[RMDB]
RNA sequence: GGGAACGACUCGAGUAGAGUCGAAAACGAGAUCGCCGAGCAGCUCGUUCGCGGCGAACUUGAGCGCGAGCACGCGCUGCACGACGUCGGCGCCGUAUACGCACGAGCGCGACUGCGCGCGCGCGGAGCUGCUCGUCGUGUUCGCACGACGAGCAGCAAAAGAAACAACAACAACAAC
Reactivity to DMS in 0.01 (KOAc 150mM, MgCl2 10mM, bicine 150mM(pH8.5), 24C), signal-to-noise 1, nucleotides 027 to 126: c100g000a080g000a080u000c010g010c050c000g010a040g030c040a080g000c020u000c040g010u000u020c040g020c010g010g020c030g030a040a070c130u030u030g000a110g010c030g000c010g020a060g020c080a110c020g000c010g050c030u020g020c010a090c050g000a040c080g000u000c020g020g040c020g030c020c060g000u010a120u010a140c300g000c100a030c020g000a120g000c000g080c050g030a080c080u000g000c000g010c010g030c020g020c020g000c020g000g000a100
Reactivity to 2A3 in 0.01 (KOAc 150mM, MgCl2 10mM, bicine 150mM(pH8.5), 24C), signal-to-noise 2, nucleotides 027 to 126: c030g000a010g040a200u130c040g070c000c010g050a010g040c030a010g000c020u030c050g020u160u020c040g040c120g130g000c020g030a030a060c030u130u130g120a030g130c010g000c040g020a020g020c050a010c020g000c020g000c030u080g000c020a010c050g170a040c040g040u030c030g060g150c010g000c000c000g030u060a100u010a100c200g040c060a010c040g040a070g090c020g000c050g080a100c120u240g000c030g010c020g000c020g010c010g000c000g020g030a020